[RMDB]
RNA sequence: GGGAACGACUCGAGUAGAGUCGAAAAAUGAUUGCCAUCGCUAAAAUGAUGAUGGGAUAACGUAACGCUGAUUUCACUUUGUCGGUCAACUGACGCUGGGCUUUUUGCUGACGCGCCAGUUCAAAGCCCAAAUGAGGUGAUUCGUCACCUCAUUUGGAAAAGAAACAACAACAACAAC
Reactivity to 2A3 in 0.01 (KOAc 150mM, MgCl2 10mM, bicine 150mM(pH8.5), 24C), signal-to-noise 3, nucleotides 027 to 126: a000u130g010a030u050u070g150c010c000a000u010c020g000c060u120a290a110a070a190u240g150a120u030g000a000u020g010g000g050a050u070a110a060c110g070u030a070a010c030g040c080u070g040a120u040u140u150c080a070c080u070u070u110g000u040c030g040g000u040c050a040a020c020u020g030a010c000g000c050u020g000g000g010c000u170u160u040u150u300g000c000u020g020a040c020g000c000g000c040c020a000g010u000u000c000a040a020a020g040c000
Reactivity to DMS in 0.01 (KOAc 150mM, MgCl2 10mM, bicine 150mM(pH8.5), 24C), signal-to-noise 3, nucleotides 027 to 126: a090u010g000a080u020u000g010c010c000a000u000c020g020c090u010a080a070a150a070u020g000a060u000g010a030u010g020g000g010a060u010a060a100c100g010u000a070a090c120g010c060u000g020a110u000u000u000c070a100c060u000u000u000g000u010c040g000g010u000c090a050a050c030u000g000a020c010g020c020u000g010g000g000c000u000u000u000u000u010g010c010u000g000a190c220g000c040g010c010c000a020g000u000u000c100a050a040a080g020c110